Annotation
Source: RMDB library RSTRND, as collected in RNAgym. The record gives the reactivity of an RNA of 207 nucleotides to DMS and 2A3. For DMS, 7,470 sequencing reads were counted. Reactivities are given for positions 27 through 156.

RNA sequence: GGGAACGACUCGAGUAGAGUCGAAAAUUCGAGUCGCACGGAAGCCUUAGCACUAUGUGCAUUGUAUUUUAAUACGCUGCACCCGUGCUAGUGCCAAUGAUGAUGUCAUUGGUGCGACGUCAUCAAACUGCGGGAAAGCUCCUAUAUGGCAUGGGAUGUUUACAUUCUACUUCGGUAGAAUGUAAACAAAAGAAACAACAACAACAAC
Reactivity to DMS in 0.01 (KOAc 150mM, MgCl2 10mM, bicine 150mM(pH8.5), 24C), signal-to-noise 3, nucleotides 027 to 156: u000u000c030g010a100g000u000c020g040c020a040c010g020g010a080a080g010c020c040u000u000a020g000c000a020c010u000a090u010g010u000g000c000a030u000u000g010u000a000u000u010u000u010a110a110u000a010c010g030c130u000g000c000a010c010c130c260g010u000g020c010u000a030g010u010g010c010c010a030a120u010g000a000u000g030a080u000g020u010c000a180u000u000g020g030u010g020c020g010a030c010g020u010c020a050u010c040a100a080a130c070u000g010c030g000g000g020a070a090a120g010c020u000c010c020u000a060u000a090u010g020g010c060a090u010g000g010g040a160u000
Reactivity to 2A3 in 0.01 (KOAc 150mM, MgCl2 10mM, bicine 150mM(pH8.5), 24C), signal-to-noise 9, nucleotides 027 to 156: u050u030c020g010a010g020u010c000g020c030a010c050g100g160a090a030g010c010c020u040u050a000g000c020a010c010u080a070u300g000u000g000c000a010u000u030g010u010a020u000u200u050u150a220a080u010a010c000g000c010u000g010c000a000c000c050c040g000u000g000c000u010a010g010u020g030c010c010a030a040u030g010a010u020g020a030u150g030u030c010a020u020u100g070g010u070g040c030g000a000c010g010u010c000a010u020c010a030a100a090c070u100g010c050g020g020g040a040a080a060g040c020u020c010c020u060a070u020a040u190g060g020c060a040u040g030g010g030a010u040